[RMDB]
RNA sequence: GGGAACGACUCGAGUAGAGUCGAAAAUUGAACAAAAAUUGCAAGCAGAGAUAAUAAAACUUUGAGAUAGUUGCCUGACAUAACCUUUCUUUGAAUUCACUUAUUCAGUACAUGGGUGCUACUUAGAUUAUCAUAAUGGGCCAAAACUCUGCCUAAACUUUUAGUUUUACUUCGGUAAAACUAAAAGAAAAGAAACAACAACAACAAC
Reactivity to DMS in 0.01 (KOAc 150mM, MgCl2 10mM, bicine 150mM(pH8.5), 24C), signal-to-noise 1, nucleotides 027 to 156: u000u000g030a100a300c020a030a060a160a230a080u010u030g000c090a100a030g000c040a020g020a050g090a100u040a020a140u000a070a050a100a110c010u010u000u000g000a200g000a090u000a030g030u000u030g000c010c000u030g000a110c050a080u020a020a070c050c020u010u010u000c020u000u000u000g000a020a090u000u000c070a050c080u010u000a080u000u000c020a230g020u010a080c300a070u000g000g070g000u000g000c070u010a040c010u010u010a050g020a040u030u010a000u000c000a070u000a110a050u000g040g000g030c030c060a100a070a040a030c020u000c010u000g040c010c000u000a140a140a180
Reactivity to 2A3 in 0.01 (KOAc 150mM, MgCl2 10mM, bicine 150mM(pH8.5), 24C), signal-to-noise 2, nucleotides 027 to 156: u080u080g020a100a000c040a050a000a180a010a130u150u190g020c020a070a030g040c020a000g010a010g030a030u070a150a060u050a010a110a080a000c040u080u090u230g060a100g010a080u140a040g010u060u050g020c010c000u050g010a090c010a050u060a050a050c040c000u030u120u100c020u130u070u030g030a050a050u080u010c020a030c080u050u060a030u110u130c040a060g080u090a120c000a070u060g070g020g000u000g000c020u020a050c000u030u030a010g040a080u090u050a000u130c010a020u050a180a010u170g000g020g000c040c020a070a020a040a020c040u030c000u020g000c030c010u110a150a090a000